[RMDB]
RNA sequence: GGGAACGACUCGAGUAGAGUCGAAAAGAUAUGGACUUCGACAUGCGAAAGCUGCUCGGAAACGAGCAGAACUACUCACUCGCAACAGCGAAGUCCUAAGUCAAAGAAUUGGGUUCGCCCAAUUCAACUGGAUACAUCACUUCGGUGAUGUAUCCAGAAAAGAAACAACAACAACAAC
Reactivity to DMS in 0.01 (KOAc 150mM, MgCl2 10mM, bicine 150mM(pH8.5), 24C), signal-to-noise 1, nucleotides 027 to 126: g000a000u000a300u000g000g010a030c050u020u000c010g040a060c180a290u010g000c010g000a070a090a090g050c000u000g020c010u000c000g000g000a060a080a110c010g000a060g010c010a000g000a070a080c110u000a080c040u000c210a060c160u000c020g000c000a000a070c290a230g000c000g010a000a000g030u000c000c020u020a010a080g000u000c030a120a250a110g000a000a010u000u000g000g000g020u030u000c270g020c000c000c010a010a010u000u000c000a080a080
Reactivity to 2A3 in 0.01 (KOAc 150mM, MgCl2 10mM, bicine 150mM(pH8.5), 24C), signal-to-noise 1, nucleotides 027 to 126: g040a000u080a020u120g000g010a000c060u010u060c000g130a150c110a100u060g040c000g000a100a060a060g070c000u000g000c040u020c010g010g000a030a080a070c000g010a000g040c000a010g000a040a010c040u100a020c010u030c090a110c050u000c000g000c010a060a140c040a110g070c020g000a000a010g000u040c000c000u030a010a000g010u020c020a060a060a200g000a000a000u010u010g040g040g030u010u190c300g190c100c050c040a050a010u020u000c000a000a040